[RMDB]
RNA sequence: GGGAACGACUCGAGUAGAGUCGAAAAGCCCAGGGUAUGUUCACGGGGCGAUGCUGCCCUCCCAGCUGGCCCAUGGGUGACCCUGGGAACAUUAACUGCCUCACAACGUUUGUGCCUCAGUUACCCGAGUGUAGGCACGCUUCGGCGUGCCUACACUAAAAGAAACAACAACAACAAC
Reactivity to 2A3 in 0.01 (KOAc 150mM, MgCl2 10mM, bicine 150mM(pH8.5), 24C), signal-to-noise 1, nucleotides 027 to 126: g040c000c040c000a000g010g010g000u240a230u300g070u010u070c010a010c070g030g000g000g020c010g010a020u190g000c000u000g000c010c000c000u070c000c010c000a020g000c000u010g180g040c010c020c020a050u090g000g000g050u000g030a010c000c000c000u000g000g000g000a000a000c000a000u020u030a010a030c010u050g020c000c040u030c000a030c000a010a070c190g030u050u140u000g030u090g060c010c000u100c000a000g010u040u040a030c000c000c000g000